[RMDB]
RNA sequence: GGGAACGACUCGAGUAGAGUCGAAAAUAAUCAAGAUGAAUCGUUUUUAGUUUGCUUGCUUACCUUAUGGGCCAGCAUGAGAUCAACUUGAAUCUUUUUAUGUAGGCAGAAAGCGACGGAAUUUAAAAAUAUACGGACGAUUCGUCGUCCGUAUAUUAAAAGAAACAACAACAACAAC
Reactivity to 2A3 in 0.01 (KOAc 150mM, MgCl2 10mM, bicine 150mM(pH8.5), 24C), signal-to-noise 4, nucleotides 027 to 126: u220a000a060u080c050a010a000g010a070u120g040a050a180u020c040g100u040u070u080u030u090a120g060u030u070u080g020c000u000u000g000c000u030u040a090c020c000u150u120a130u260g040g010g000c000c020a010g000c010a020u050g090a040g000a060u000c010a010a060c040u020u070g010a070a070u030c040u030u050u030u010u010a140u100g040u020a020g100g000c060a010g130a100a070a000g030c010g040a040c020g050g070a030a000u120u190u210a120a070a010
Reactivity to DMS in 0.01 (KOAc 150mM, MgCl2 10mM, bicine 150mM(pH8.5), 24C), signal-to-noise 3, nucleotides 027 to 126: u040a110a080u050c060a040a060g000a110u010g000a150a120u010c020g010u010u000u000u020u020a110g010u020u010u020g020c010u020u010g010c000u000u010a100c090c090u020u090a130u010g000g010g000c060c090a070g000c020a020u010g000a060g000a020u000c050a090a110c170u020u020g000a050a050u000c010u000u000u030u030u020a010u020g000u000a030g010g010c020a300g000a050a040a050g010c010g010a030c040g020g000a090a060u020u020u020a010a060a080